The record gives the reactivity of an RNA of 177 nucleotides to 2A3 and DMS.
[RMDB]
RNA sequence: GGGAACGACUCGAGUAGAGUCGAAAAGCCGGGGCCCGAGAAGAGAGGGGAGGAAGAGAAGGAAGAGGAGAGGGGGCCGCAGUGGGCGCUCGGCUCUCAGGAGCCGAGCUCAUGGACGGGUGAGGCGCAUUUAGGUUUACUUCGGUAAACCUAAAUGAAAAGAAACAACAACAACAAC
Reactivity to 2A3 in 0.01 (KOAc 150mM, MgCl2 10mM, bicine 150mM(pH8.5), 24C), signal-to-noise 2, nucleotides 027 to 126: g010c000c000g030g000g080g040c010c020c040g070a080g050a140a020g060a030g040a040g000g020g050g010a050g010g060a100a100g040a070g030a110a060g070g030a060a060g050a030g060g010a020g000a060g010g000g020g010g000c050c020g030c020a020g020u050g020g020g010c130g000c070u050c020g020g030c000u000c010u020c020a120g040g080a000g000c000c000g010a020g000c010u010c000a040u080g010g040a010c000g010g010g000u080g050a020g010g000c050g020
Reactivity to DMS in 0.01 (KOAc 150mM, MgCl2 10mM, bicine 150mM(pH8.5), 24C), signal-to-noise 2, nucleotides 027 to 126: g010c040c010g010g040g000g000c050c040c000g000a080g020a090a090g020a090g000a190g000g010g010g000a090g000g040a130a030g000a160g000a110a090g000g020a060a060g000a150g000g020a120g000a190g000g050g030g020g000c080c050g050c050a110g020u020g000g010g000c090g020c250u000c040g000g060c020u010c000u000c110a170g000g010a070g080c040c000g000a060g020c020u000c060a040u020g000g040a070c040g030g000g000u000g000a150g000g000c090g030
The data come from the RNA Mapping Database (RMDB), library RFM100. For 2A3 the reverse transcriptase was SuperScript II with manganese. DMS adducts were read by reverse transcription with MarathonRT. For DMS, 1,966 sequencing reads were counted.